RNA sequence: GGGAACGACUCGAGUAGAGUCGAAAAGCCUUCCAUGUUACGCUUCGUAGUAGCCAUACCAUAAAGGGCUCCUUUCUAUGUGGAUCCUGCGGUUCUGUAGGAUAUGUUUUAACUGGCGAUAGUGUACCAAAUGGUCAGAGUUCGCUCUGACCAUUUGAAAAGAAACAACAACAACAAC
Reactivity to DMS in 0.01 (KOAc 150mM, MgCl2 10mM, bicine 150mM(pH8.5), 24C), signal-to-noise 5, nucleotides 027 to 126: g000c060c040u010u010c060c070a110u000g010u000u000a030c060g010c030u010u000c050g010u000a060g010u000a060g010c130c030a070u000a110c090c070a080u000a050a090a080g010g000g010c070u000c050c050u000u000u010c090u000a090u010g040u010g010g000a040u000c010c020u010g020c060g000g030u010u020c120u010g010u000a040g000g010a060u000a030u000g000u000u000u000u010a060a090c060u000g010g020c020g010a050u010a050g010u000g020u000a040c100
Reactivity to 2A3 in 0.01 (KOAc 150mM, MgCl2 10mM, bicine 150mM(pH8.5), 24C), signal-to-noise 4, nucleotides 027 to 126: g030c000c000u040u030c030c030a100u110g020u060u080a020c010g020c020u000u040c020g050u050a050g030u040a020g010c000c000a070u050a120c000c060a060u120a110a120a020g030g060g030c040u130c000c010u070u100u060c080u100a120u140g080u070g080g000a020u020c010c010u030g010c020g140g010u140u150c110u210g020u020a020g020g000a030u020a020u080g050u010u110u000u090a090a050c030u010g060g010c010g020a040u120a070g040u030g000u030a040c000
The record gives the reactivity of an RNA of 177 nucleotides to DMS and 2A3. The 2A3 profile rests on 4,277 reads.